[RMDB]
RNA sequence: GGGAACGACUCGAGUAGAGUCGAAAAUACUUAUGUUGAAUCACUACACACAGGCUGUUGAAUUCAGCUGUCUGUGGAGAAAUUAUACCAACCACAUGGUUAGACAGAAGGAAUACAAUAUAUUGCUUAAUUUGUAUCUGAAAGCUAAGCAACAUGAACCUCCUCAUAGUUUCGACUAUGAGGAGGUAAAAGAAACAACAACAACAAC
Reactivity to DMS in 0.01 (KOAc 150mM, MgCl2 10mM, bicine 150mM(pH8.5), 24C), signal-to-noise 2, nucleotides 027 to 156: u000a040c020u010u010a020u010g010u000u000g040a160a110u000c020a080c020u000a270c050a120c040a060c040a080g030g020c020u010g020u010u040g010a170a280u000u010c050a020g010c010u010g000u000c020u000g020u020g000g040a160g000a160a080a130u000u000a070u000a100c000c050a030a080c060c100a060c300a050u010g040g020u010u000a080g010a070c000a090g010a090a040g000g000a090a080u000a110c040a060a070u000a110u000a040u010u000g000c030u000u000a010a060u000u000u000g000u000a060u010c140u000g040a080a050a100g020c040u010a030a050g010c040a000a060c010a060u000g010a130
Reactivity to 2A3 in 0.01 (KOAc 150mM, MgCl2 10mM, bicine 150mM(pH8.5), 24C), signal-to-noise 3, nucleotides 027 to 156: u170a030c060u130u130a070u110g030u010u030g100a090a050u120c020a000c080u120a050c080a000c000a000c000a040g040g000c020u020g030u090u060g100a270a250u300u300c010a000g000c000u010g000u000c010u000g000u010g060g000a040g030a030a070a020u210u120a100u050a080c040c020a040a040c040c020a020c000a110u060g000g000u000u010a040g020a040c020a030g100a080a020g020g020a070a050u100a060c000a010a010u130a030u060a060u190u250g040c030u060u080a050a050u180u160u010g040u050a060u070c020u040g060a060a030a030g000c010u040a010a010g050c010a010a040c010a030u140g060a030